[RMDB]
RNA sequence: GGGAACGACUCGAGUAGAGUCGAAAACACGAACGUUGGCUAAUCCUGGUCGGACAUCAGGGGGUUAGUGCAUUGGCAUAAGCCAGCUUGGCGCUAAUAGAUACUAAUCGUAGCAUAGCUGAAUAAACGUAUCCACUAGGUUCGCCUAGUGGAUACGAAAAGAAACAACAACAACAAC
Reactivity to DMS in 0.01 (KOAc 150mM, MgCl2 10mM, bicine 150mM(pH8.5), 24C), signal-to-noise 4, nucleotides 027 to 126: c040a090c200g010a120a080c180g000u000u000g000g010c020u000a030a150u040c060c010u000g010g010u020c160g010g010a300c110a010u020c000a070g020g000g020g010g040u010u000a020g000u020g000c060a020u010u010g010g000c040a130u060a130a180g050c010c000a130g050c180u090u000g000g050c020g000c000u010a020a030u000a110g010a040u040a030c050u010a050a010u010c020g040u030a020g000c080a070u020a030g000c030u000g030a050a100u010a050a090a120
Reactivity to 2A3 in 0.01 (KOAc 150mM, MgCl2 10mM, bicine 150mM(pH8.5), 24C), signal-to-noise 4, nucleotides 027 to 126: c090a000c010g110a180a000c050g040u080u090g020g000c030u030a050a060u060c000c010u020g010g030u060c120g060g090a030c020a050u020c010a010g000g000g020g020g010u020u000a010g010u020g000c020a020u020u080g040g000c000a040u060a300a060g030c000c010a030g080c100u070u210g060g000c040g000c010u020a020a030u030a120g110a090u050a030c020u050a090a050u020c060g110u050a020g070c040a100u030a030g000c020u020g040a080a020u140a160a050a010

An RNA of 177 nucleotides, treated with DMS and 2A3 and read out base by base. Source: RMDB library OK1LIB, as collected in RNAgym. The reactions ran in a buffer of 150 mM KOAc, 10 mM MgCl2 and 150 mM bicine (pH 8.5), at 24 C. For 2A3, 3,633 sequencing reads were counted.